RNA sequence: GGGAACGACUCGAGUAGAGUCGAAAAUUCCCAAACCCCCGGAAGUUGCCCGCACAGCGUCCAUCUUGGAACCGUCUCGAUCCAAGGCACGCCAAACCUCUGGAACCCACCCGAGAGGCAUUUCUCGCUAAAUCAGUGAGUUCGCUCACUGAUUUAGAAAAGAAACAACAACAACAAC
Reactivity to DMS in 0.01 (KOAc 150mM, MgCl2 10mM, bicine 150mM(pH8.5), 24C), signal-to-noise 1, nucleotides 027 to 126: u010u010c000c000c010a060a220a300c020c000c000c030c030g020g010a070a150g060u000u000g030c030c020c050g000c040a060c100a140g030c070g000u010c010c070a050u030c000u000u000g000g030a060a070c110c070g020u000c020u010c040g030a170u000c000c000a020a080g000g000c150a060c050g020c010c020a060a160a100c030c000u020c020u000g000g020a090a120c030c000c010a200c140c010c030g010a070g030a060g000g020c140a080u010u010u010c000u010c170g000

This 177-nucleotide RNA was probed chemically with DMS. For DMS the reverse transcriptase was MarathonRT. The data come from the RNA Mapping Database (RMDB), library RFMREP.